[RMDB]
RNA sequence: GGGAACGACUCGAGUAGAGUCGAAAACGGAGCCAGCACAGAGAGGAUGAGAGGAGGGCUGCACUCAUCUGCUCUUCCAGAUGGCACUGAUCAAAGGACGUGGUGAUCAUGGGAACACUCUGGAGAGCACGUAGCCAUAUUUAGAUAUAUUGACAACUCCUAAAUACGCAUUCGUGCGUAUUUAGGAAAAAGAAACAACAACAACAAC
Reactivity to 2A3 in 0.01 (KOAc 150mM, MgCl2 10mM, bicine 150mM(pH8.5), 24C), signal-to-noise 3, nucleotides 027 to 156: c070g010g000a020g040c020c020a030g040c060a040c020a040g060a030g010a010g050g020a060u050g010a010g010a010g070g010a010g010g040g000c010u020g000c020a030c010u070c040a130u040c030u030g000c000u000c010u240u050c010c000a010g000a040u010g000g030c060a020c060u030g000a000u000c020a040a060a090g120g030a050c060g130u130g050g060u040g020a010u020c020a040u170g050g020g050a060a100c060a000c090u020c000u000g000g000a020g010a010g010c000a000c020g010u030a000g020c020c010a050u090a080u150u150u060a040g020a020u040a010u000a040u090u000g010a040c010a040a060c030
Reactivity to DMS in 0.01 (KOAc 150mM, MgCl2 10mM, bicine 150mM(pH8.5), 24C), signal-to-noise 2, nucleotides 027 to 156: c110g000g020a150g010c030c030a060g030c060a050c060a100g040a150g050a080g030g000a050u000g000a130g020a100g040g000a060g010g010g020c020u000g020c040a060c050u000c040a070u010c060u000g020c000u000c010u000u000c000c000a040g000a080u020g020g000c040a220c070u020g010a010u020c000a080a140a110g000g010a090c130g060u000g010g010u000g010a030u000c040a010u000g010g020g000a110a120c040a050c080u000c010u000g000g000a090g000a030g020c020a040c050g020u000a150g010c030c010a070u010a070u000u000u010a070g010a080u000a100u010a060u040u000g010a020c010a060a080c150